[RMDB]
RNA sequence: GGGAACGACUCGAGUAGAGUCGAAAAGAUAUGGAAGCGUUGUAUGACAUGCUUGUACGGUCGGAAACGACCGGUAGAGCAACAGCAUACACCGCUUCCUAAGUCAAAACCGUCCUUCGGGACGGAACAUAAGUGAAAUCUUCGGAUUUCACUUAUGAAAAGAAACAACAACAACAAC
Reactivity to 2A3 in 0.01 (KOAc 150mM, MgCl2 10mM, bicine 150mM(pH8.5), 24C), signal-to-noise 7, nucleotides 027 to 126: g010a020u080a040u180g000g010a000a010g010c010g010u010u010g010u010a010u010g090a190c080a150u100g000c010u130u100g300u300a040c010g000g000u010c010g010g040a080a110a070c010g000a000c010c010g000g010u080a020g000a000g020c010a020a060c040a040g100c000a000u010a010c010a000c010c000g000c000u000u000c000c000u000a010a000g000u000c010a010a020a130a210c000c000g000u010c000c000u040u100c270g070g000g000a000c000g000g000a010a010
Reactivity to DMS in 0.01 (KOAc 150mM, MgCl2 10mM, bicine 150mM(pH8.5), 24C), signal-to-noise 9, nucleotides 027 to 126: g000a040u000a300u010g000g010a010a010g020c010g030u000u000g010u000a010u000g010a070c100a270u000g010c000u000u000g010u010a300c010g000g010u000c010g010g000a070a130a250c010g000a000c000c000g010g000u010a300g000a010g000c000a030a060c280a170g010c010a010u000a010c010a010c030c000g010c000u000u010c000c000u000a000a070g010u000c040a110a080a100a170c010c000g000u000c000c010u000u000c210g030g000g010a010c010g010g000a050a070